[RMDB]
RNA sequence: GGGAACGACUCGAGUAGAGUCGAAAACGCUGGGAGACUACAUCCUCCCCACCUAAUGACUUUCUUUGAUCUACUGAAGCGCGCACGGUAGGGAGAAAGUACAUUAGAGGGAUGUAGUCUCCUGUGCUGAAGCGCGCACGGCAACCGAAAGGUGCGAGAAAAACGACUACUUCGGUAGUCGUUUUUCAAAAGAAACAACAACAACAAC
Reactivity to 2A3 in 0.01 (KOAc 150mM, MgCl2 10mM, bicine 150mM(pH8.5), 24C), signal-to-noise 1, nucleotides 027 to 156: c050g000c060u100g000g030g010a000g000a010c000u000a020c000a010u010c010c000u050c070c080c010c000a000c010c010u000a000a000u010g010a000c010u090u110u000c020u300u300u000g000a000u000c000u000a000c000u010g030a210a030g020c000g000c000g000c000a030c000g000g000u010a000g000g000g000a010g000a010a000a000g000u170a300c000a000u000u000a000g110a170g030g040g000a000u000g000u020a000g000u000c000u000c000c000u000g000u000g030c010u020g030a160a100g010c020g010c000g000c010a000c000g000g000c010a020a020c010c000g110a100a050a000g000g000u050g030c080g010a090

Conditions: 150 mM KOAc, 10 mM MgCl2 and 150 mM bicine (pH 8.5), 24 C. Structure probing data (2A3) for a 207-nucleotide construct. For 2A3 the reverse transcriptase was SuperScript II with manganese. Source: RMDB library RNAMAK, as collected in RNAgym.